[RMDB]
RNA sequence: GGGAACGACUCGAGUAGAGUCGAAAAUUUAUUAUGCACAAAUAAAGUUAAAGAUUGUAUAGUAAUCCACGUGGUAGAGGCACAGUUAGGUUCGCUGUGGUGCAACUCUUAUUAGUAACUAAUCCAACUAUUCAGAAAUAUUCGUAUUUCUGAAUAGAAAAGAAACAACAACAACAAC
Reactivity to 2A3 in 0.01 (KOAc 150mM, MgCl2 10mM, bicine 150mM(pH8.5), 24C), signal-to-noise 9, nucleotides 027 to 126: u010u010u010a010u010u010a030u040g040c010a010c020a040a110a090u210a120a160a030g130u150u170a170a090a030g070a180u130u050g020u020a020u020a040g040u030a010a030u030c030c010a090c170g080u170g060g030u070a030g020a040g080g060c000a000c000a010g010u030u030a020g000g020u030u010c010g000c020u000g000u010g020g040u050g030c020a030a070c010u000c010u070u150a150u070u070a060g020u020a030a020c020u010a050a030u040c020c010a020a030
Reactivity to DMS in 0.01 (KOAc 150mM, MgCl2 10mM, bicine 150mM(pH8.5), 24C), signal-to-noise 5, nucleotides 027 to 126: u030u010u010a010u010u010a030u010g000c020a040c090a110a100a080u010a060a060a150g010u020u020a080a110a140g000a160u010u020g000u000a040u010a030g010u000a050a030u010c020c020a050c140g000u020g010g000u000a020g000a030g020g010c020a030c030a030g020u010u020a070g020g010u000u010c030g000c030u000g000u000g010g000u000g000c150a070a080c040u000c030u010u030a080u020u010a060g010u020a020a030c040u000a060a080u010c040c060a050a180
The data come from the RNA Mapping Database (RMDB), libraries RFM100 and RFMREP. Chemical mapping of a 177-nucleotide RNA with 2A3 and DMS. 2A3 adducts were read by reverse transcription with SuperScript II with manganese. 2A3 is a SHAPE reagent: it acylates the 2'-hydroxyl of flexible nucleotides of all four kinds.